An RNA of 177 nucleotides, treated with 2A3 and DMS and read out base by base. The RNA was probed in 150 mM KOAc, 10 mM MgCl2 and 150 mM bicine (pH 8.5) at 24 C. As a SHAPE reagent, 2A3 marks flexible, mostly unpaired nucleotides at the ribose 2'-OH. It was measured as part of the RMDB library OK1LIB.

[RMDB]
RNA sequence: GGGAACGACUCGAGUAGAGUCGAAAAAGCUGUGGAUGUAGGUUUUGAUUAGUGGGUGAAAGUUCAGGCCGAUUGUUAUAGUUGUUUGGUUUGUGGCCUGGUGGCUUUAACAGCGGUGAUCCAUGGCCAAUAUUUAUAAUUUCGAUUAUAAAUAUUGAAAAGAAACAACAACAACAAC
Reactivity to 2A3 in 0.01 (KOAc 150mM, MgCl2 10mM, bicine 150mM(pH8.5), 24C), signal-to-noise 2, nucleotides 027 to 126: a000g020c020u020g000u000g020g000a030u020g040u110a060g050g000u050u030u140u190g120a070u220u170a030g030u100g120g010g000u100g070a070a060a000g000u030u070c030a000g020g000c010c000g040a050u070u090g140u020u100a080u090a150g000u000u020g000u070u040u080g090g040u060u080u090g080u050g040g000c000c000u010g000g000u010g010g010c000u000u070u080a060a020c080a040g060c060g000g080u100g030a020u030c010c000a000u050g030g000c000
Reactivity to DMS in 0.01 (KOAc 150mM, MgCl2 10mM, bicine 150mM(pH8.5), 24C), signal-to-noise 6, nucleotides 027 to 126: a070g000c010u000g030u000g010g010a020u000g020u020a070g000g010u010u020u020u020g010a170u020u030a080g020u010g010g000g020u010g010a060a050a050g010u010u010c020a040g000g010c020c010g010a080u030u020g010u010u010a100u020a160g000u000u000g010u000u010u010g010g010u010u010u010g020u020g000g010c010c010u000g000g010u020g000g000c020u000u020u020a050a060c140a100g010c040g000g010u020g000a060u000c010c010a020u010g000g010c020